[RMDB]
An RNA of 177 nucleotides, treated with DMS and 2A3 and read out base by base. The DMS profile rests on 6,799 reads. Source: RMDB library OK2TST, as collected in RNAgym.
RNA sequence: GGGAACGACUCGAGUAGAGUCGAAAAUGGUGCCGAAGAAGAGGAAAGGCUCCUGCAGCACCAGUCCGAUGUUGCGCCGGUAAUCGGCGAUGCGCAGCGAGCGGAUGUCCACGCCGUCGACCAGCAAAUAAUUAGCGGAUUUCGAUCCGCUAAUUAUAAAAGAAACAACAACAACAAC
Reactivity to DMS in 0.01 (KOAc 150mM, MgCl2 10mM, bicine 150mM(pH8.5), 24C), signal-to-noise 5, nucleotides 027 to 126: u010g020g020u000g030c010c020g010a110a040g010a070a060g000a070g010g000a120a080a220g010g010c010u000c010c010u000g010c070a110g000c010a010c010c010a060g000u000c020c010g000a100u010g020u010u010g010c040g010c020c030g000g020u000a120a140u000c030g010g010c020g000a020u000g010c050g010c030a060g000c060g010a100g010c040g000g000a070u000g010u000c070c020a070c080g010c060c020g010u000c080g010a090c050c020a080g010c130a080a110
Reactivity to 2A3 in 0.01 (KOAc 150mM, MgCl2 10mM, bicine 150mM(pH8.5), 24C), signal-to-noise 2, nucleotides 027 to 126: u030g030g000u000g020c010c030g010a070a030g060a170a050g040a050g060g070a220a220a070g170g030c020u000c010c000u020g000c030a040g020c010a020c010c010a010g040u040c010c000g010a050u100g050u150u080g020c040g010c040c030g000g050u110a130a100u140c000g030g000c040g000a040u050g000c020g000c020a030g020c030g090a020g050c040g000g010a020u050g040u010c040c000a030c040g050c010c000g050u050c030g010a060c020c030a010g020c000a110a040